Structure probing data (DMS and 2A3) for a 207-nucleotide construct.
The data come from the RNA Mapping Database (RMDB), library RNAMAK.
The 2A3 profile rests on 5,770 reads.
DMS adducts were read by reverse transcription with MarathonRT.

RNA sequence: GGGAACGACUCGAGUAGAGUCGAAAAGGGGUCGGUGUUACAGCGUCACGAGCACGAUAAGUAACUGAAGCCUCCACGGUUACUUUUGACGUGCGAUGAGUGACGAAGGUGGCCGACGGAGGCACCCAAAAGGUAGAAUGCUUCGGCAUUCUACCAAGUUAUCGUUUAACUUCGGUUAAACGAUAACAAAAGAAACAACAACAACAAC
Reactivity to DMS in 0.01 (KOAc 150mM, MgCl2 10mM, bicine 150mM(pH8.5), 24C), signal-to-noise 2, nucleotides 027 to 156: g000g000g040g000u000c020g020g010u010g010u000u010a110c110a210g060c040g010u010c000a050c060g040a160g060c020a030c020g040a260u000a040a040g040u010a020a010c000u000g040a080a120g020c000c010u000c010c010a300c000g030g000u000u000a000c030u000u000u010u020g020a130c080g050u000g010c040g030a180u000g000a200g010u000g000a060c030g000a050a040g020g020u000g020g020c030c040g040a070c050g020g020a040g050g050c000a110c020c000c000a110a040a140a170g010g020u000a000g000a040a020u000g000c000u000u010c300g050g010c000a020u000u000c010u010a000c000c010a010a040
Reactivity to 2A3 in 0.01 (KOAc 150mM, MgCl2 10mM, bicine 150mM(pH8.5), 24C), signal-to-noise 6, nucleotides 027 to 156: g090g020g030g000u010c020g010g000u070g070u180u130a070c060a100g070c020g000u010c020a020c070g030a040g010c030a010c020g070a140u040a150a020g020u010a000a000c000u020g080a110a020g010c020c000u000c010c010a020c010g020g000u010u000a000c000u070u050u070u250g300a180c050g000u020g010c000g050a230u170g040a030g010u010g010a010c000g010a010a000g130g060u130g300g000c000c000g000a010c010g000g000a000g000g000c010a030c000c000c000a040a100a000a050g000g000u010a000g000a010a000u020g010c040u090u150c300g080g000c010a000u000u000c000u010a000c000c000a000a000
The reactions ran in a buffer of 150 mM KOAc, 10 mM MgCl2 and 150 mM bicine (pH 8.5), at 24 C.